[RMDB]
RNA sequence: GGGAACGACUCGAGUAGAGUCGAAAACAGCUCACCAGUCUGGUAGGAACCAUUCAGUCCUCCUAUGCCUUCUUUCUCCAACUGUGUGGUCUUUCUUCUGAAACAAAGAAGAAAUAGCCAAAUCAGAGCGUAAACUACAAUUCGUUGUAGUUUACGCAAAAGAAACAACAACAACAAC
Reactivity to DMS in 0.01 (KOAc 150mM, MgCl2 10mM, bicine 150mM(pH8.5), 24C), signal-to-noise 5, nucleotides 027 to 126: c090a080g020c030u010c030a040c030c050a070g010u000c050u000g010g010u000a080g010g010a130a090c050c040a090u000u010c060a080g010u000c050c010u010c020c010u000a070u010g010c040c020u000u000c030u000u000u000c030u020c030c090a060a130c030u000g000u020g010u010g010g010u000c160u000u000u000c010u000u000c010u000g000a110a130a130c290a080a100a050g010a010a020g010a000a010a030u000a140g010c030c000a020a100a120u010c030a030g010a150
Reactivity to 2A3 in 0.01 (KOAc 150mM, MgCl2 10mM, bicine 150mM(pH8.5), 24C), signal-to-noise 9, nucleotides 027 to 126: c010a010g030c010u020c020a040c010c000a020g080u040c030u060g060g020u060a080g050g080a070a080c040c000a030u080u090c030a030g070u030c000c010u020c010c010u060a080u100g030c000c010u030u040c020u020u070u010c030u030c020c020a080a100c030u010g010u010g050u090g070g020u020c020u000u010u000c000u000u000c000u010g090a130a110a110c100a070a200a030g000a000a000g010a000a000a000u070a010g010c000c000a030a080a090u110c020a010g030a020
The record gives the reactivity of an RNA of 177 nucleotides to DMS and 2A3.
The RNA was probed in 150 mM KOAc, 10 mM MgCl2 and 150 mM bicine (pH 8.5) at 24 C.
For DMS the reverse transcriptase was MarathonRT.
It was measured as part of the RMDB libraries RFM100 and RFMREP.